[RMDB]
RNA sequence: GGGAACGACUCGAGUAGAGUCGAAAAACACUUCUCAGGAUGGCGCGUUGCAGUCCAACAAGAUCCAGGGACUGUACAGAAUUUUCCUAUACCUCGAGUCGGGUUUGGAAUCUAAGGUUGACUCGCUAAAACUUUACGUGGUUCGCCACGUAAAGAAGAGGAUAAGCCAGUUCGCUGGCUUAUCCUCAAAAGAAACAACAACAACAAC
Reactivity to 2A3 in 0.01 (KOAc 150mM, MgCl2 10mM, bicine 150mM(pH8.5), 24C), signal-to-noise 1, nucleotides 027 to 156: a000c010a060c050u090u070c050u000c010a090g130g000a110u010g000g060c020g040c050g050u070u060g000c000a000g060u030c010c000a030a000c040a200a260g200a280u030c030c010a050g000g000g090a030c000u010g070u030a000c000a050g300a240a070u000u000u030u010c000c000u070a060u110a120c000c000u000c050g010a010g000u000c000g000g020g020u060u030u000g000g020a000a010u020c010u070a180a080g170g000u010u110g020a050c020u010c000g000c010u120a140a140a080a080c000u000u000u000a010c000g000u000g000g020u090u020c100g030c060c000a000c000g020u000a000a000a000g000a000a030